Structure probing data (2A3 and DMS) for a 207-nucleotide construct.
It was measured as part of the RMDB library OK3TST.
Conditions: 150 mM KOAc, 10 mM MgCl2 and 150 mM bicine (pH 8.5), 24 C.

RNA sequence: GGGAACGACUCGAGUAGAGUCGAAAAGGCUAGAUUUCUGGAGGAACUUGAAAUAUUUUCAGAGGAACUACAAGGUCAGAACUGUUUUCACAAUAAUAGUGAAACAUUAUGUAUCUCCGCUGCUAUGCUUGACAUUUUCAUCGAUGGUGCAGUAGCAUCAUCCAGCUACGUUCGCGUAGCUGGAUGAAAAAGAAACAACAACAACAAC
Reactivity to 2A3 in 0.01 (KOAc 150mM, MgCl2 10mM, bicine 150mM(pH8.5), 24C), signal-to-noise 3, nucleotides 027 to 156: g040g000c010u040a040g010a150u080u130u110c060u080g040g020a030g040g030a070a040c010u060u140g030a060a100a070u140a100u100u090u040u020c040a040g040a030g050g020a030a020c000u040a020c050a070a050g040g010u020c010a010g030a030a010c020u030g030u040u050u070u020c010a010c020a040a140u300a210a050u100a180g010u000g000a000a000a020c010a030u100u140a060u180g050u030a070u030c050u020c030c040g010c030u010g000c000u020a010u140g000c010u040u070g020a030c010a040u030u080u120u150c110a100u140c060g040a040u060g000g030u060g010c000a020g040u120a000g000c000a020
Reactivity to DMS in 0.01 (KOAc 150mM, MgCl2 10mM, bicine 150mM(pH8.5), 24C), signal-to-noise 1, nucleotides 027 to 156: g040g010c000u000a030g020a080u000u010u020c050u010g010g010a120g020g010a040a080c060u000u000g030a070a050a170u000a020u010u000u030u040c040a090g040a110g020g060a050a060c080u000a120c020a050a020g000g010u000c080a200g010a030a110c160u000g030u000u000u000u000c010a040c020a110a170u000a130a110u000a160g050u010g010a050a040a000c070a090u000u020a170u000g000u010a100u000c000u050c070c060g000c000u000g030c000u010a090u000g010c010u010u030g000a150c040a110u000u000u000u000c140a140u010c100g020a150u000g020g000u010g040c000a080g060u010a090g000c010a240